The record gives the reactivity of an RNA of 177 nucleotides to DMS and 2A3. Conditions: 150 mM KOAc, 10 mM MgCl2 and 150 mM bicine (pH 8.5), 24 C. Values cover nucleotides 27 to 126. 2A3 is a SHAPE reagent: it acylates the 2'-hydroxyl of flexible nucleotides of all four kinds. DMS adducts were read by reverse transcription with MarathonRT. Source: RMDB library OK2TRN, as collected in RNAgym.
RNA sequence: GGGAACGACUCGAGUAGAGUCGAAAAAUGCGGCGAGCGGUGCGUCAAGGAAGGGGAUGGAAGCCGGGACGUGGUCGAACACAACGCGCGCCGGCGCUACGGAAAGGUUGCCCGAGCGCGAUGUGUAAGUCCGUAGUAUCUUCGGAUACUACGGACUAAAAGAAACAACAACAACAAC
Reactivity to DMS in 0.01 (KOAc 150mM, MgCl2 10mM, bicine 150mM(pH8.5), 24C), signal-to-noise 2, nucleotides 027 to 126: a120u000g020c070g000g030c050g010a080g030c020g030g010u010g020c100g000u000c100a110a060g000g040a100a070g010g030g010g030a080u000g010g030a030a100g000c060c050g010g010g010a080c090g010u000g020g010u000c070g040a090a030c060a000c010a030a080c030g010c000g000c010g000c120c160g010g010c100g020c010u000a040c030g010g000a120a120a070g000g030u000u010g000c040c000c000g000a230g020c000g010c010g010a010u000g010u000g030u010a080
Reactivity to 2A3 in 0.01 (KOAc 150mM, MgCl2 10mM, bicine 150mM(pH8.5), 24C), signal-to-noise 1, nucleotides 027 to 126: a000u130g000c000g060g000c050g030a050g020c070g010g000u010g010c030g030u060c080a070a110g040g020a060a010g010g010g000g040a030u060g010g040a030a040g060c030c030g030g000g000a040c020g020u050g020g000u020c040g010a060a010c010a000c020a000a070c060g010c010g000c000g050c130c000g000g010c060g000c030u040a000c000g150g120a160a050a050g240g000u050u110g020c000c000c000g000a010g010c020g000c000g010a000u000g010u000g020u030a020